[RMDB]
Structure probing data (DMS and 2A3) for a 177-nucleotide construct. Values are in units of 0.01, from 0 to 300, in steps of 10. For 2A3, 29,079 sequencing reads were counted.

RNA sequence: GGGAACGACUCGAGUAGAGUCGAAAAGAUAUGGAUCAUUUAGUGGAGCAGGGUAUCGGAAACGAUACAUUGCGUUGAAACUACUGAUGAUCCUAAGUCAAAACGGUUCUUGUUCGCAAGAACCGAAGUUACCUGUUAACUUCGGUUAACAGGUAACAAAAGAAACAACAACAACAAC
Reactivity to DMS in 0.01 (KOAc 150mM, MgCl2 10mM, bicine 150mM(pH8.5), 24C), signal-to-noise 5, nucleotides 027 to 126: g010a010u000a020u010g000g000a010u000c000a010u000u010u010a010g030u000g010g010a070g010c010a010g000g000g010u000a000u000c010g020g010a010a010a030c010g010a020u000a010c000a030u010u000g000c010g030u010u010g010a200a150a160c010u000a080c070u000g000a010u010g010a010u000c000c000u000a010a070g000u010c000a120a090a110a260c040g010g000u000u000c000u010u010g000u000u010c260g030c010a000a000g000a010a010c000c010g000a010a040
Reactivity to 2A3 in 0.01 (KOAc 150mM, MgCl2 10mM, bicine 150mM(pH8.5), 24C), signal-to-noise 6, nucleotides 027 to 126: g000a000u010a010u040g000g000a000u010c030a020u060u260u300a030g000u020g050g090a130g020c000a010g060g000g010u000a000u000c000g000g010a010a010a000c010g000a000u000a000c010a010u000u010g000c000g020u010u130g170a300a180a090c020u020a000c010u030g010a010u010g000a000u000c000c000u000a010a000g010u000c010a000a020a100a170c020g000g000u000u010c000u000u040g080u090u110c300g020c150a010a000g000a010a010c000c000g000a030a000